Source information: An RNA of 177 nucleotides, treated with 2A3 and DMS and read out base by base. DMS adducts were read by reverse transcription with MarathonRT. The RNA was probed in 150 mM KOAc, 10 mM MgCl2 and 150 mM bicine (pH 8.5) at 24 C.
[RMDB]
RNA sequence: GGGAACGACUCGAGUAGAGUCGAAAAAGAAAGAGAGCGUAGCACACACACAGACUAAGUCUGACACACACCUACGCUAGAUGUGUGUGUGAAGUCGAGAUAUCGACAAGUGUGUGUGAUGAAAAAAGCGCUAUCUGUGAUUCGUCACAGAUAGCGCAAAAGAAACAACAACAACAAC
Reactivity to 2A3 in 0.01 (KOAc 150mM, MgCl2 10mM, bicine 150mM(pH8.5), 24C), signal-to-noise 1, nucleotides 027 to 126: a010g070a010a080a010g150a000g000a010g020c030g030u050a010g010c000a000c020a000c020a000c000a000c000a010g020a000c020u120a150a090g010u050c010u000g010a000c010a010c000a000c000a010c000c000u040a000c000g010c070u030a030g030a090u050g030u000g010u000g000u010g000u000g040a000a000g010u000c000g000a010g020a100u300a070u160c000g000a000c000a120a160g010u010g000u000g000u000g000u020g000a010u010g070a000a040a000a020a000a070
Reactivity to DMS in 0.01 (KOAc 150mM, MgCl2 10mM, bicine 150mM(pH8.5), 24C), signal-to-noise 1, nucleotides 027 to 126: a030g000a100a060a090g010a060g010a060g020c050g050u000a030g010c000a020c000a020c000a000c000a070c000a010g000a020c030u030a110a280g030u000c000u020g000a030c000a030c000a000c000a000c000c000u000a020c010g020c160u000a030g050a040u000g000u000g010u000g030u000g020u000g000a010a090g000u000c000g000a050g010a260u020a030u000c010g010a000c000a030a010g000u000g020u010g010u000g000u000g010a040u000g000a000a050a020a150a080a090